[RMDB]
RNA sequence: GGGAACGACUCGAGUAGAGUCGAAAAGAGCGUCGAGAGACGAAGAGAAGUGCAUCGAUCCACAACGGAGAACGUAAUAAUGCACCCAUGUGGGUUAGUGUCCGGAACAACGGGCACAAGAGGCAGACAUUAAUGGGCUGUUCGCAGCCCAUUAAUGAAAAGAAACAACAACAACAAC
Reactivity to 2A3 in 0.01 (KOAc 150mM, MgCl2 10mM, bicine 150mM(pH8.5), 24C), signal-to-noise 5, nucleotides 027 to 126: g060a020g030c000g000u000c010g020a030g010a000g010a080c050g040a100a030g030a010g030a140a010g050u050g030c020a040u060c030g020a040u010c000c000a020c020a060a060c110g010g000a090g010a130a040c030g030u030a060a040u150a170a090u220g050c030a060c000c010c000a020u080g060u100g050g000g010u000u070a070g000u010g000u000c000c010g050g010a120a070c080a100a040c050g020g010g000c000a000c000a010a010g040a010g050g000c020a010g020a080
Reactivity to DMS in 0.01 (KOAc 150mM, MgCl2 10mM, bicine 150mM(pH8.5), 24C), signal-to-noise 6, nucleotides 027 to 126: g010a110g000c010g000u010c010g010a130g010a210g000a030c020g000a120a090g000a100g020a100a090g020u000g010c040a050u000c020g010a020u000c000c000a030c030a090a100c180g000g000a090g000a090a100c120g000u000a120a070u030a150a070u020g000c080a160c040c000c070a140u010g030u010g010g010g010u000u020a070g010u000g000u000c020c000g000g030a140a120c300a120a160c000g010g000g010c000a000c000a030a030g000a050g000g010c020a060g000a220